[RMDB]
RNA sequence: GGGAACGACUCGAGUAGAGUCGAAAAGCGUGGCGAAACAUCGAAAUAAUCGAUGGGAACGGGCUAAUGGAUCCAAGCCCGUACGAUCCAUAGGCGCCAGCCACGCAAGGCGCCGAACGAAAGAUAACCUUGUUGUUGGAUUCGUCCAACAACAAGGAAAAGAAACAACAACAACAAC
Reactivity to 2A3 in 0.01 (KOAc 150mM, MgCl2 10mM, bicine 150mM(pH8.5), 24C), signal-to-noise 1, nucleotides 027 to 126: g050c010g000u010g000g030c060g060a140a000a060c010a020u030c000g100a000a100a080u290a150a160u150c010g010a000u010g000g030g030a010a000c020g030g000g020c020u030a120a060u120g130g050a010u100c060c010a020a010g010c040c020c000g010u010a040c080g030a020u030c040c010a000u070a160g000g030c010g000c000c010a010g000c000c000a010c010g000c000a000a030g010g000c010g060c050c020g000a030a000c050g100a070a000a000g120a030u080a110a080
Reactivity to DMS in 0.01 (KOAc 150mM, MgCl2 10mM, bicine 150mM(pH8.5), 24C), signal-to-noise 2, nucleotides 027 to 126: g020c040g020u000g000g030c050g020a190a150a160c020a010u010c020g000a030a130a200u020a150a150u000c000g020a000u000g000g000g000a100a050c040g000g000g010c000u000a050a080u020g000g000a130u020c130c100a070a050g010c000c000c000g020u000a040c140g000a100u010c000c040a110u000a130g000g000c000g000c000c000a140g030c010c010a010c000g030c000a050a030g000g010c000g040c000c030g000a060a130c290g000a130a080a050g030a150u030a100a250